[RMDB]
RNA sequence: GGGAACGACUCGAGUAGAGUCGAAAAUGUUUGUGCUAAGGGAAAUCAUAACCUUAGGUAUGUUGUAUAAACAUAACGGCAAACUAGUUAUAGCUAAGGUGUUUCACUACGUUAUAACUUAAAUUAAAGCGAUUGUAGAAUUCGUUCUACAAUCGCUAAAAGAAACAACAACAACAAC
Reactivity to DMS in 0.01 (KOAc 150mM, MgCl2 10mM, bicine 150mM(pH8.5), 24C), signal-to-noise 2, nucleotides 027 to 126: u030g010u020u000u000g000u000g010c000u010a030a000g000g000g000a040a170a190u020c300a090u000a060a200c000c000u000u000a000g000g060u000a000u000g000u000u000g000u050a160u030a140a020a000c000a000u000a040a050c280g030g000c020a020a020a000c000u000a020g010u030u010a000u000a010g020c020u020a220a080g010g000u010g030u030u000u000c020a140c000u000a140c240g000u000u000a010u010a000a000c000u000u040a010a030a050u040u030a070a080
Reactivity to 2A3 in 0.01 (KOAc 150mM, MgCl2 10mM, bicine 150mM(pH8.5), 24C), signal-to-noise 6, nucleotides 027 to 126: u100g010u010u020u000g020u030g030c000u000a000a000g060g020g030a060a150a160u190c070a070u060a080a080c000c000u000u000a000g000g010u010a000u020g010u010u010g110u060a130u270a190a040a000c010a010u050a050a050c050g080g000c000a000a000a010c000u020a000g000u000u000a000u000a000g000c020u030a200a290g050g000u100g030u080u130u130c010a020c010u020a000c020g010u010u000a000u000a000a000c000u000u040a050a140a170u140u140a100a070